[RMDB]
RNA sequence: GGGAACGACUCGAGUAGAGUCGAAAAAUUGACUCCAAUACCUUCCAGACUGUUGGCGGUGGUGUAUGGCUUCGAGUGAAAGACUCAACAGAUGCAACCUUUGGAUAUGUCAUCUCGAACAACACUUUCAGAACUGUCACACUAGGAACGUCAGCAAUAACACGCAAGAAUUCGUUCUUGCGUGUUAAAAAGAAACAACAACAACAAC
Reactivity to 2A3 in 0.01 (KOAc 150mM, MgCl2 10mM, bicine 150mM(pH8.5), 24C), signal-to-noise 5, nucleotides 027 to 156: a000u130u180g020a030c030u000c020c000a030a040u080a170c000c020u040u000c020c010a090g030a160c110u050g070u150u050g030g010c020g030g040u060g000g000u010g010u050a220u060g120g020c100u020u020c070g020a020g000u100g100a070a060a030g030a040c010u020c090a020a060c030a110g040a080u100g070c030a060a090c010c010u090u120u150g060g040a090u110a100u300g060u040c020a040u000c010u010c030g030a030a010c020a020a030c010a030c020u070u210u140c100a100g030a130a010c030u040g010u040c010a010c000a000c030u040a020g040g050a050a040c030g030u030c040a030g010c010a040a010
Reactivity to DMS in 0.01 (KOAc 150mM, MgCl2 10mM, bicine 150mM(pH8.5), 24C), signal-to-noise 2, nucleotides 027 to 156: a070u000u010g000a060c010u010c020c140a060a130u000a060c030c000u000u000c030c010a160g030a090c070u000g010u000u000g030g000c050g000g040u000g000g040u000g000u010a080u010g020g020c050u000u010c040g040a240g050u000g000a060a080a070g020a060c050u000c030a110a100c110a030g010a100u000g010c120a130a120c030c040u010u000u000g020g030a050u000a070u000g020u030c030a050u000c020u000c020g000a110a060c080a060a070c060a040c030u010u030u000c110a110g000a130a080c010u010g010u010c030a060c040a070c030u000a110g030g000a020a050c050g010u000c020a080g010c060a070a220
Chemical mapping of a 207-nucleotide RNA with 2A3 and DMS. The reactions ran in a buffer of 150 mM KOAc, 10 mM MgCl2 and 150 mM bicine (pH 8.5), at 24 C. The data come from the RNA Mapping Database (RMDB), library OK3TST.